[RMDB]
Notes:
Chemical mapping of a 177-nucleotide RNA with DMS and 2A3. Source: RMDB library TTRDES, as collected in RNAgym. Conditions: 150 mM KOAc, 10 mM MgCl2 and 150 mM bicine (pH 8.5), 24 C. Values cover nucleotides 27 to 126. Values are in units of 0.01, from 0 to 300, in steps of 10.
RNA sequence: GGGAACGACUCGAGUAGAGUCGAAAAGAUAUGGAAUUCAUCUCAGCCUUUGAUCAGAAGUCGGAAACGACUUCUGGGAGGCUACGCGAGAUGAGAUUCCUAAGUCAAACCACCCUUCGGGGUGGAAGAUCAAGGAAGUGUUCGCACUUCCUUGAUCAAAAGAAACAACAACAACAAC
Reactivity to DMS in 0.01 (KOAc 150mM, MgCl2 10mM, bicine 150mM(pH8.5), 24C), signal-to-noise 2, nucleotides 027 to 126: g000a050u000a300u000g010g010a020a040u000u000c010a010u010c000u030c010a080g010c000c010u000u010u010g000a080u020c020a000g000a000a000g000u000c000g000g000a070a060a210c000g000a000c010u000u000c000u000g000g000g000a010g020g020c010u000a010c300g040c300g020a030g010a010u000g010a100g020a050u000u000c000c010u000a060a160g010u030c020a150a170a220c000c010a020c000c000c010u000u010c280g050g030g000g010u000g000g000a020a050
Reactivity to 2A3 in 0.01 (KOAc 150mM, MgCl2 10mM, bicine 150mM(pH8.5), 24C), signal-to-noise 1, nucleotides 027 to 126: g010a050u070a050u110g000g030a010a020u050u030c010a010u000c010u010c040a030g000c020c000u300u300u100g090a090u110c010a000g020a000a010g010u000c010g020g020a050a120a080c000g000a000c000u000u010c000u000g010g000g000a010g000g020c040u050a060c240g080c180g020a010g010a010u000g030a050g020a030u000u000c010c000u020a150a020g050u030c020a000a070a150c020c000a010c000c010c030u060u110c300g010g010g000g000u020g000g000a030a050